[RMDB]
RNA sequence: GGGAACGACUCGAGUAGAGUCGAAAAGAUAUGGAAACACGGACUUUUGACGAAGGUAUCUCGGAAACGAGAUACGACCUUCGAUAAGUCCAGUGUUUCCUAAGUCAAAGCACACUUCGGUGUGCAAUCUGCUGUGUUACUUCGGUAACACAGCAGAAAAAGAAACAACAACAACAAC
Reactivity to DMS in 0.01 (KOAc 150mM, MgCl2 10mM, bicine 150mM(pH8.5), 24C), signal-to-noise 1, nucleotides 027 to 126: g040a040u000a300u000g000g010a030a010a010c040a000c030g030g000a040c000u000u000u000u000g000a240c200g030a010a030g000g070u000a040u000c000u010c010g000g030a010a020a180c000g020a020g020a010u000a000c190g000a140c250c000u010u000c000g020a150u000a000a020g000u000c000c000a050g080u000g000u000u000u000c000c010u000a020a070g020u000c010a120a040a160g000c020a000c000a020c000u000u000c280g020g040u000g020u000g010c000a020a010
Reactivity to 2A3 in 0.01 (KOAc 150mM, MgCl2 10mM, bicine 150mM(pH8.5), 24C), signal-to-noise 1, nucleotides 027 to 126: g050a000u100a050u180g000g050a000a050a000c040a000c030g070g030a000c020u040u080u300u300g300a170c100g010a010a010g040g040u000a000u000c010u010c030g000g070a030a190a070c020g030a010g010a010u010a000c000g020a000c000c020u000u000c000g060a060u030a090a060g000u000c040c000a010g010u000g000u000u020u000c000c000u010a050a010g000u050c030a000a050a130g040c000a000c000a010c010u050u220c300g160g050u000g000u020g060c000a000a050
Description:
An RNA of 177 nucleotides, treated with DMS and 2A3 and read out base by base. 2A3 adducts were read by reverse transcription with SuperScript II with manganese. For DMS, 759 sequencing reads were counted. The data come from the RNA Mapping Database (RMDB), library TTRDES. DMS adducts were read by reverse transcription with MarathonRT.